Structure probing data (2A3 and DMS) for a 207-nucleotide construct. In probing experiments dimethyl sulfate is read out at A N1 and C N3, which are open when not base-paired.
RNA sequence: GGGAACGACUCGAGUAGAGUCGAAAAAGCUCUCUCAUUUCUAUUAAGUCCAGAAUCAAUAUUGAUGUCUUUGAUGAUUUGAGUUAAUGCUUUAGUGUAUUCUUCUAACACUGGCAUUUUGACACCUGUUCUAUGUGACAUAAGCGUCAAUGAUCGCCUACGGGGUAAGAUUCGUCUUACCCCGUAGAAAAGAAACAACAACAACAAC
Reactivity to 2A3 in 0.01 (KOAc 150mM, MgCl2 10mM, bicine 150mM(pH8.5), 24C), signal-to-noise 3, nucleotides 027 to 156: a000g050c000u010c000u000c000u000c050a020u040u060u010c050u080a130u140u140a170a010g030u020c040c030a030g120a110a090u130c050a090a090u100a120u260u110g040a040u040g050u000c010u040u050u050g020a040u020g010a010u060u030u010g030a000g020u060u080a060a010u030g010c010u080u060u180a050g010u030g040u030a080u070u090c070u080u050c050u090a060a000c010a020c060u010g040g000c000a020u070u060u020u060g030a020c030a020c040c030u080g020u080u020c060u080a150u170g110u120g020a000c010a080u160a150a030g100c000g000u150c000a030a050u250g040a080u080c050g010c090
Reactivity to DMS in 0.01 (KOAc 150mM, MgCl2 10mM, bicine 150mM(pH8.5), 24C), signal-to-noise 2, nucleotides 027 to 156: a050g000c120u000c070u000c000u000c020a060u000u000u000c030u020a120u000u000a090a120g000u000c070c110a160g020a260a120u010c030a080a190u000a180u000u000g000a090u000g020u000c040u000u010u010g010a130u000g010a030u000u000u010g020a110g000u000u000a030a090u000g010c040u000u000u000a050g030u020g030u000a080u000u000c100u020u000c030u000a120a080c020a080c060u010g000g010c000a150u000u000u010u010g010a050c000a030c010c040u000g020u000u010c060u000a130u000g000u000g010a050c060a030u000a090a050g000c020g040u000c040a040a060u000g000a080u000c020g000c110